[RMDB]
RNA sequence: GGGAACGACUCGAGUAGAGUCGAAAAUUGUGGUCAAGACCUUGGCGUAGUAUCCAAGGUUGUCAAGGUUCCUAUUGACUUAUCAAUGAUUGAGUUUAUGUUAUGGUGUAAGGAUGGACAGGGGAAAUAAAACGAUUGAAUUCGUUCAAUCGUUUUAAAAAGAAACAACAACAACAAC
Reactivity to DMS in 0.01 (KOAc 150mM, MgCl2 10mM, bicine 150mM(pH8.5), 24C), signal-to-noise 9, nucleotides 027 to 126: u000u000g010u000g010g010u010c060a070a110g000a020c000c000u000u000g000g010c220g010u010a150g020u010a130u000c030c030a020a030g000g010u000u000g010u000c070a050a060g010g010u000u000c040c050u000a110u010u000g010a040c030u000u010a080u000c040a050a060u000g000a110u000u010g010a080g010u000u000u000a060u010g010u000u000a070u000g010g010u000g010u000a050a070g010g000a070u000g000g010a050c060a070g000g000g010g000a070a060a110
Reactivity to 2A3 in 0.01 (KOAc 150mM, MgCl2 10mM, bicine 150mM(pH8.5), 24C), signal-to-noise 4, nucleotides 027 to 126: u020u020g020u030g010g050u050c030a040a020g020a020c000c000u000u000g010g010c040g060u110a050g060u060a100u060c020c010a000a000g030g000u010u050g000u000c000a020a020g050g000u060u050c000c000u010a090u010u050g000a020c000u080u100a120u170c050a080a080u100g050a110u080u120g030a040g120u070u100u080a090u100g090u080u050a090u120g030g020u060g030u070a060a030g050g020a050u060g000g010a000c020a020g020g000g000g040a000a090a000